[RMDB]
Chemical mapping of a 177-nucleotide RNA with DMS and 2A3.
For DMS, 1,545 sequencing reads were counted.
For 2A3, 1,055 sequencing reads were counted.
For 2A3 the reverse transcriptase was SuperScript II with manganese.
The RNA was probed in 150 mM KOAc, 10 mM MgCl2 and 150 mM bicine (pH 8.5) at 24 C.
RNA sequence: GGGAACGACUCGAGUAGAGUCGAAAAAAGAAGAAUAAAAGCCAAAAGAAGAAUACUGCAGCUUCCUUACAACAGGUUAUUUUAAAAUGUUGAGAUUUAACUUCAAAGGAUGUCUCAUUAGUCCUUACUCUAUUGGAAUUUUCGAAUUCCAAUAGAGAAAAGAAACAACAACAACAAC
Reactivity to DMS in 0.01 (KOAc 150mM, MgCl2 10mM, bicine 150mM(pH8.5), 24C), signal-to-noise 2, nucleotides 027 to 126: a100a080g010a070a090g020a190a050u010a060a080a080a090g010c040c040a040a080a080a110g000a070a060g000a170a070u010a050c060u000g000c080a050g010c030u000u010c010c010u000u020a120c100a030a050c120a030g000g010u000u000a040u000u010u010u020a020a040a060a110u000g010u000u000g020a130g010a060u000u020u000a050a090c060u010u010c080a080a050a040g000g010a040u010g010u010c060u000c020a040u020u020a060g000u020c020c010u000u000a170
Reactivity to 2A3 in 0.01 (KOAc 150mM, MgCl2 10mM, bicine 150mM(pH8.5), 24C), signal-to-noise 1, nucleotides 027 to 126: a000a000g110a020a000g040a080a060u200a040a110a040a020g060c020c030a100a000a000a030g040a000a010g020a130a020u070a150c040u060g010c010a010g000c010u010u000c010c000u000u100a020c020a090a000c040a050g000g090u070u080a130u060u150u090u140a070a030a040a070u090g040u070u080g010a030g000a080u030u020u160a070a030c030u090u090c070a100a000a000g080g020a010u030g050u020c020u000c050a000u000u110a040g030u000c000c000u030u020a030